[RMDB]
RNA sequence: GGGAACGACUCGAGUAGAGUCGAAAAGAGGUUUGGUGGUAUGGAGAACGUUGAGACACUCCUUCUAAGGCAAAGGACAAGUUGCAAUAGCAGGUUCCCUCUGCAAGCAGAACAGAGGUUCAGAACCAGUCAUGCACUCUUUCGAGAGUGCAUGACUAAAAGAAACAACAACAACAAC
Reactivity to DMS in 0.01 (KOAc 150mM, MgCl2 10mM, bicine 150mM(pH8.5), 24C), signal-to-noise 2, nucleotides 027 to 126: g000a140g030g000u000u000u000g020g020u000g010g030u000a060u010g000g000a050g000a030a100c130g010u000u010g010a160g030a130c140a080c080u010c020c040u010u000c020u000a090a100g030g010c100a020a030a060g010g010a040c100a110a060g000u010u000g000c040a060a110u000a110g000c050a100g000g020u000u000c010c000c000u000c040u000g010c030a060a160g030c180a060g010a090a120c040a040g000a020g000g020u030u000c200a130g020a030a050c020c030
The record gives the reactivity of an RNA of 177 nucleotides to DMS. Source: RMDB library OK2TST, as collected in RNAgym. For DMS, 1,149 sequencing reads were counted. The RNA was probed in 150 mM KOAc, 10 mM MgCl2 and 150 mM bicine (pH 8.5) at 24 C.